RNA sequence: GGGAACGACUCGAGUAGAGUCGAAAAGGGACCGGCCCGAUGAAGCCCGGCAACCUAACUUUAUUUAAGCGUAAAGUGAAGGUGCUAAUUCCAGCAAAAUGGUGUAUUCCGUUUUGGUAGAUAAGAGAAGCGUGACAUGAGUUCGCUCAUGUCACAAGAUUGGGAUACUCUUCGGAGUAUCCCAAUCAAAAGAAACAACAACAACAAC
Reactivity to 2A3 in 0.01 (KOAc 150mM, MgCl2 10mM, bicine 150mM(pH8.5), 24C), signal-to-noise 2, nucleotides 027 to 156: g030g010g000a040c040c040g010g100c000c010c000g020a050u100g040a040a010g030c050c020c010g010g000c050a090a120c000c000u000a000a030c000u030u010u050a070u170u100u220a200a050g120c100g030u020a010a010a020g000u030g070a130a080g000g000u000g000c000u010a030a010u100u010c020c020a000g040c030a120a020a000a070u020g010g000u070g060u130a090u180u090c000c010g010u000u000u020u010g090g000u060a100g010a150u170a190a030g070a030g050a160a020g090c070g070u000g000a000c000a000u000g000a000g000u080u140c130g000c010u000c010a000u000g000u020c000a000c010a000a020
Reactivity to DMS in 0.01 (KOAc 150mM, MgCl2 10mM, bicine 150mM(pH8.5), 24C), signal-to-noise 1, nucleotides 027 to 156: g010g010g010a090c000c000g030g010c040c000c070g040a210u000g020a170a120g040c040c000c100g000g010c040a030a070c000c010u000a100a010c000u000u000u010a040u000u010u000a130a100g070c260g010u010a010a040a050g000u010g020a210a040g040g000u000g000c070u000a040a220u000u000c010c010a030g010c000a010a000a040a060u000g000g030u000g030u000a070u000u010c040c010g000u010u000u000u020g010g000u000a050g000a040u000a070a140g010a180g000a090a150g030c150g020u000g010a010c000a000u000g010a060g010u010u000c280g000c010u000c010a000u000g020u040c000a010c000a030a070